[RMDB]
Notes
The record gives the reactivity of an RNA of 177 nucleotides to DMS. Reactivities are given for positions 27 through 126. Conditions: 150 mM KOAc, 10 mM MgCl2 and 150 mM bicine (pH 8.5), 24 C.
RNA sequence: GGGAACGACUCGAGUAGAGUCGAAAAGCGUCUCGAUGGUAAAGAUGAGAUUGUGGUUAUGCGGUUGUCUGAUACUGUGCACUGCAGGGUAGCAGCCCCGACAAGUCGUUUAGCGAUCAUCAACACAGUAGCAGACAUGGUUCGCCAUGUCUGCUACAAAAGAAACAACAACAACAAC
Reactivity to DMS in 0.01 (KOAc 150mM, MgCl2 10mM, bicine 150mM(pH8.5), 24C), signal-to-noise 2, nucleotides 027 to 126: g020c080g010u000c020u010c040g010a160u000g030g000u020a080a100a090g020a040u030g100a080g000a050u000u000g040u000g010g000u000u000a060u010g010c040g030g020u000u010g000u010c050u000g040a070u000a080c030u010g020u010g030c060a090c080u010g000c140a110g030g010g030u020a090g020c090a080g000c030c010c000c020g020a100c130a040a140g010u000c020g000u000u000u000a110g020c040g010a080u010c070a060u000c060a050a130c100a020c110a040
The DMS profile rests on 1,643 reads. Source: RMDB library OK2TRN, as collected in RNAgym. DMS (dimethyl sulfate) methylates the pairing face of unpaired adenines and cytosines.